[RMDB]
RNA sequence: GGGAACGACUCGAGUAGAGUCGAAAAGAUAUGGAUAACUCUAGGAUCCGAAGAACUCGGAAACGAGGGAGGAUACUAGAGGUUAUCCUAAGUCAAAGUGACAGUCUUCUUCGGAAGACUGUCACAAUCUAAAAAUCCAGUUCGCUGGAUUUUUAGAAAAAGAAACAACAACAACAAC
Reactivity to DMS in 0.01 (KOAc 150mM, MgCl2 10mM, bicine 150mM(pH8.5), 24C), signal-to-noise 1, nucleotides 027 to 126: g010a020u000a300u010g010g000a010u000a010a020c000u000c010u000a000g000g020a020u000c000c000g010a110a190g000a130a180c010u000c000g010g000a090a090a140c010g010a000g010g000g000a060g010g030a000u000a020c000u030a010g000a010g010g000u000u000a000u000c020c000u010a040a070g000u000c030a060a130a150g020u010g000a000c010a000g000u000c000u000u000c000u010u000c180g020g010a000a010g010a000c000u000g010u000c000a000c000a030a040
Notes:
An RNA of 177 nucleotides, treated with DMS and read out base by base. The RNA was probed in 150 mM KOAc, 10 mM MgCl2 and 150 mM bicine (pH 8.5) at 24 C. Values cover nucleotides 27 to 126. Reactivities are rounded to 0.1 and cut off at 0 and 3. High DMS reactivity at an A or C suggests that its Watson-Crick edge is free. The DMS profile rests on 1,347 reads.